[RMDB]
RNA sequence: GGGAACGACUCGAGUAGAGUCGAAAAGAUAUGGACGUAUGGUGGGUGUAGGGACGUUGAAAUCGGAAACGAUGGAGUCCUCACAUAGUCAUACGUCCUAAGUCAAAGCAUGGGUUCGCCCAUGCAACUAACUAAUGCCGUUCGCGGCAUUAGUUAGAAAAGAAACAACAACAACAAC
Reactivity to 2A3 in 0.01 (KOAc 150mM, MgCl2 10mM, bicine 150mM(pH8.5), 24C), signal-to-noise 2, nucleotides 027 to 126: g040a020u080a030u140g000g000a000c000g010u000a020u010g040g100u060g060g300g000u000g010u030a060g000g060g000a000c020g130u270u090g040a010a050a000u020c000g000g050a070a020a000c010g000a000u010g000g050a010g000u000c000c000u020c000a020c000a020u030a000g020u040c000a000u010a010c010g000u020c000c000u000a000a000g000u000c010a030a040a080g000c000a000u000g000g000g060u050u090c290g150c020c000c010a010u000g000c000a000a000
Reactivity to DMS in 0.01 (KOAc 150mM, MgCl2 10mM, bicine 150mM(pH8.5), 24C), signal-to-noise 2, nucleotides 027 to 126: g010a010u000a300u020g020g000a010c000g020u000a000u000g000g010u000g010g000g030u000g000u000a050g010g000g020a010c000g000u000u000g000a080a140a000u000c000g000g000a150a090a140c010g000a020u000g000g000a130g000u000c000c010u010c020a020c020a010u000a270g000u000c010a020u000a010c000g000u000c000c000u010a000a070g000u000c030a080a070a160g010c000a000u010g000g000g020u000u020c300g010c000c000c000a000u000g020c000a030a090